[RMDB]
RNA sequence: GGGAACGACUCGAGUAGAGUCGAAAACAAGUACGGUGUGCGUUCGAAUCUCGUUGCCGCAGGCCCUAUCCGGACGCUGGCGAUGAGUGCGAUCGUCGGCGGUGCGCUCGGCGAGGAGGCCGGCGCCAAUGCCGCAUAGGUUCGCCUAUGCGGCAUUAAAAGAAACAACAACAACAAC
Reactivity to DMS in 0.01 (KOAc 150mM, MgCl2 10mM, bicine 150mM(pH8.5), 24C), signal-to-noise 2, nucleotides 027 to 126: c090a110a090g030u000a070c080g020g010u010g010u010g010c040g020u000u000c020g010a060a120u010c050u000c030g020u000u000g010c070c010g020c100a080g000g010c000c020c050u000a110u010c160c060g000g020a160c010g000c010u000g000g000c010g000a010u000g010a130g010u000g010c100g010a060u000c010g020u000c010g010g000c030g000g020u000g000c030g020c010u000c030g030g020c000g020a120g000g000a130g010g000c070c010g000g000c010g000c020c160
Reactivity to 2A3 in 0.01 (KOAc 150mM, MgCl2 10mM, bicine 150mM(pH8.5), 24C), signal-to-noise 2, nucleotides 027 to 126: c040a070a100g070u120a030c050g020g150u080g020u000g070c030g000u010u140c010g050a110a180u040c030u020c060g120u030u060g000c010c010g040c050a030g030g070c000c000c000u080a140u100c070c030g020g000a010c000g010c040u060g000g010c000g000a010u040g040a050g140u140g100c060g080a000u000c000g020u020c000g000g050c000g030g010u070g010c050g010c060u240c140g000g000c040g030a120g140g120a040g170g000c000c000g010g000c000g000c030c010

Structure probing data (DMS and 2A3) for a 177-nucleotide construct. Values are in units of 0.01, from 0 to 300, in steps of 10. The DMS profile rests on 3,354 reads. The RNA was probed in 150 mM KOAc, 10 mM MgCl2 and 150 mM bicine (pH 8.5) at 24 C. DMS (dimethyl sulfate) methylates the pairing face of unpaired adenines and cytosines. 2A3 adducts were read by reverse transcription with SuperScript II with manganese. The 2A3 profile rests on 2,027 reads.